[RMDB]
RNA sequence: GGGAACGACUCGAGUAGAGUCGAAAAUAAAAGCGCGAAAAAGAUCGAUCGAUCGUUUGAACGCGCAAGUCUAAGUUUGAUACCGGCAUACUAGCUAGCUAGCUAGCAAAACAAACUUAGUAAAAAAGUGACUACAAUGAUUCGUCAUUGUAGUCACAAAAGAAACAACAACAACAAC
Reactivity to 2A3 in 0.01 (KOAc 150mM, MgCl2 10mM, bicine 150mM(pH8.5), 24C), signal-to-noise 2, nucleotides 027 to 126: u130a000a070a020a030g020c010g000c010g060a000a080a000a000a020g020a010u010c020g090a130u150c240g000a020u000c050g070u030u050u130g050a120a010c000g020c000g020c020a010a000g020u000c000u000a000a000g000u000u010u040g090a090u090a120c040c020g030g020c060a080u130a190c000u000a020g040c000u020a000g140c020u050a010g000c010u050a000g040c040a040a090a040a010c010a000a000a000c000u000u010a030g050u150a120a030a010a000a000a040
Reactivity to DMS in 0.01 (KOAc 150mM, MgCl2 10mM, bicine 150mM(pH8.5), 24C), signal-to-noise 3, nucleotides 027 to 126: u000a090a070a150a200g000c000g010c000g010a050a060a020a070a080g000a010u000c010g010a140u010c250g000a000u000c000g010u000u020u000g000a140a150c010g000c000g000c010a060a060g010u000c000u000a000a020g010u000u000u000g000a140u000a180c090c040g000g040c230a100u010a050c010u000a010g000c010u000a190g020c150u010a070g000c000u000a030g010c070a010a090a120a130c000a000a010a010c000u000u000a010g000u010a010a060a090a060a080a110
This 177-nucleotide RNA was probed chemically with 2A3 and DMS. High DMS reactivity at an A or C suggests that its Watson-Crick edge is free. Conditions: 150 mM KOAc, 10 mM MgCl2 and 150 mM bicine (pH 8.5), 24 C. For 2A3 the reverse transcriptase was SuperScript II with manganese. Values are in units of 0.01, from 0 to 300, in steps of 10. The DMS profile rests on 2,229 reads.